[RMDB]
RNA sequence: GGGAACGACUCGAGUAGAGUCGAAAAAAUAAACCGCAAAAGAUAGUCGCAACGACGAAACGCACGCUUUAGCAGCUUAAUAUGCUGCUAGGACUCCUUCUAAACUAGCUUGCUUAUGUCCUAGGGGAUUGAAAGGUCAUCUUUCAUAGAGACGCGUCUUCAAGAGGGGGUUCGCCCCCUCUUGAAGAAAAGAAACAACAACAACAAC
Reactivity to 2A3 in 0.01 (KOAc 150mM, MgCl2 10mM, bicine 150mM(pH8.5), 24C), signal-to-noise 1, nucleotides 027 to 156: a000a020u170a000a130a010c050c040g000c010a000a000a000a140g050a130u100a060g020u080c000g070c040a190a050c040g120a000c000g080a030a130a000c030g010c000a000c080g000c000u050u080u040a010g000c000a010g010c000u000u010a040a000u050a180u300g000c010u000g000c000u000a020g000g000a020c010u010c040c000u130u090c060u100a130a120a050c050u030a030g050c000u000u090g050c000u060u100a040u290g050u060c010c020u000a000g100g000g000g070a060u020u100g070a060a010a000g060g010u200c060a100u060c100u040u090u040c030a040u050a070g050a000g000a000c020g010c010g060u020